[RMDB]
RNA sequence: GGGAACGACUCGAGUAGAGUCGAAAACUGGCACUGCGCCAAACCUGACCAAUACUAGAAGUGUUGGCGCGGCGCAUCCCCCCCAGUGGCGCGUCGAUAAAGGUGCUCACGGACCGCGUACCUUUGUCAUUAGGAAAGGGUUCGCCCUUUCCUAAUGAAAAGAAACAACAACAACAAC
Reactivity to DMS in 0.01 (KOAc 150mM, MgCl2 10mM, bicine 150mM(pH8.5), 24C), signal-to-noise 6, nucleotides 027 to 126: c140u010g000g000c030a010c020u000g000c010g030c010c000a040a050a060c110c040u010g000a170c060c050a040a030u020a050c060u020a110g000a160a100g010u010g020u000u000g000g000c010g010c130g010g020c020g000c010a070u030c010c000c000c000c000c000c000a070g030u010g000g020c060g020c080g020u010c060g000a070u030a040a070a070g000g010u000g000c010u010c040a130c130g010g010a070c060c060g000c120g000u020a050c050c010u000u000u010g010u000
Reactivity to 2A3 in 0.01 (KOAc 150mM, MgCl2 10mM, bicine 150mM(pH8.5), 24C), signal-to-noise 9, nucleotides 027 to 126: c030u010g040g000c010a010c090u030g010c010g020c000c000a080a050a070c020c030u080g110a170c020c030a070a060u090a140c060u100a090g170a300a030g090u050g030u100u010g000g010c010g010c020g010g000c010g000c010a260u300c000c000c000c000c000c000c010a020g030u050g080g000c040g000c010g030u070c020g000a030u110a100a100a040g060g010u030g030c000u020c020a040c000g040g020a050c030c020g020c020g030u100a110c010c000u040u030u070g190u050